[RMDB]
Chemical mapping of a 177-nucleotide RNA with 2A3 and DMS. For DMS the reverse transcriptase was MarathonRT. The DMS profile rests on 2,333 reads. The reactions ran in a buffer of 150 mM KOAc, 10 mM MgCl2 and 150 mM bicine (pH 8.5), at 24 C.
RNA sequence: GGGAACGACUCGAGUAGAGUCGAAAAGUAUUCCAAAUUUGUUUAAAAAACGAGCAGGGGCAACUGGACUGAAUGCAAUAGUGAUCAAUACUUCAACUGUCGGCGGGACAUCUCCCCCAAGUGAAACAACUCUGUACAUCUUCGGAUGUACAGAGUUAAAAGAAACAACAACAACAAC
Reactivity to 2A3 in 0.01 (KOAc 150mM, MgCl2 10mM, bicine 150mM(pH8.5), 24C), signal-to-noise 3, nucleotides 027 to 126: g030u010a120u070u060c020c010a030a030a040u080u060u030g110u040u080u080a130a180a000a010a020a020c040g000a030g040c000a010g040g040g060g000c020a060a020c030u080g030g040a020c030u070g050a220a000u050g030c070a000a070u020a150g050u040g050a030u130c050a020a100u090a210c040u020u100c010a060a030c040u000g060u060c040g040g010c000g020g000g040a040c020a160u010c100u030c000c000c020c000c020a060a000g060u050g120a090a020a000c030
Reactivity to DMS in 0.01 (KOAc 150mM, MgCl2 10mM, bicine 150mM(pH8.5), 24C), signal-to-noise 2, nucleotides 027 to 126: g050u030a100u000u000c000c000a060a130a150u040u000u000g000u000u000u000a000a050a150a100a050a070c040g000a060g000c080a040g030g070g000g000c060a110a060c060u010g000g020a050c040u000g010a020a050u010g000c110a050a020u040a060g020u000g000a030u020c110a030a040u000a050c060u000u020c060a060a000c050u000g000u010c020g010g070c070g000g040g000a070c140a070u020c020u000c050c020c000c000c030a060a100g020u040g000a030a080a040c220